RNA sequence: GGGAACGACUCGAGUAGAGUCGAAAAGAAUGUCCAUAUUUUGCUGAAUAUUUAACGACUAAUGAAGGAGCGCGUGACUACUUUGGCAAAUACUUGAACGCGUACCAGCCAAGCAGACUCAAUCAGGCCACUAUAACUCUUUCGAGAGUUAUAGUGGAAAAGAAACAACAACAACAAC
Reactivity to 2A3 in 0.01 (KOAc 150mM, MgCl2 10mM, bicine 150mM(pH8.5), 24C), signal-to-noise 5, nucleotides 027 to 126: g050a030a070u100g020u030c020c010a010u030a050u060u090u040u050g020c020u040g020a080a020u050a060u130u160u090a130a040c040g040a030c060u070a110a140u230g130a130a050g110g020a060g030c100g000c010g020u030g010a020c010u030a030c050u080u040u050g000g000c000a010a020a080u050a070c050u060u100g030a060a010c030g000c020g050u010a040c020c000a000g000c010c000a030a000g040c020a010g020a090c010u030c080a020a130u050c010a020g130g000
Reactivity to DMS in 0.01 (KOAc 150mM, MgCl2 10mM, bicine 150mM(pH8.5), 24C), signal-to-noise 6, nucleotides 027 to 126: g000a110a060u010g010u000c010c030a080u000a070u010u000u000u010g010c040u000g010a040a050u010a030u000u000u000a070a110c070g000a290c030u000a060a080u020g010a150a110g000g000a090g010c030g010c030g020u000g000a090c090u000a030c170u000u000u000g020g010c020a020a040a060u000a050c140u000u000g010a060a060c080g000c120g020u000a090c060c040a160g010c030c040a040a050g010c080a040g000a070c070u010c070a040a050u010c120a090g010g010